[RMDB]
Chemical mapping of a 207-nucleotide RNA with 2A3. For 2A3, 1,206 sequencing reads were counted. For 2A3 the reverse transcriptase was SuperScript II with manganese.
RNA sequence: GGGAACGACUCGAGUAGAGUCGAAAAUACAAACUCUUACGCUUUAGCUGCCUAAAAACCAGCUAGCGUGACUUCUACAAGAUUGCUUGUGUCCUGUUAGAAGUCUCAAAAUAGCAAGCUACGGUUACGAAAUUGUCUAGUUUCGUGACAAGAGAUUGGUAAAUAGAAGCUUCGGCUUCUAUUUACCAAAAGAAACAACAACAACAAC
Reactivity to 2A3 in 0.01 (KOAc 150mM, MgCl2 10mM, bicine 150mM(pH8.5), 24C), signal-to-noise 2, nucleotides 027 to 156: u250a020c010a010a130a060c050u030c030u180u070a030c010g010c000u140u160u100a000g010c000u000g000c020c010u050a060a050a000a020a010c010c000a000g000c000u000a000g010c000g000u000g010a010c000u000u030c000u000a000c000a000a000g000a010u050u080g010c010u000u000g010u010g000u000c000c000u000g010u040u040a000g000a000a000g050u000c010u010c070a140a200a020a050u150a030g050c000a000a000g000c000u020a020c010g020g010u000u000a000c000g000a000a020a050u170u120g160u100c060u070a040g020u000u000u000c000g000u000g000a000c000a000a000g010a000g020a030u080u060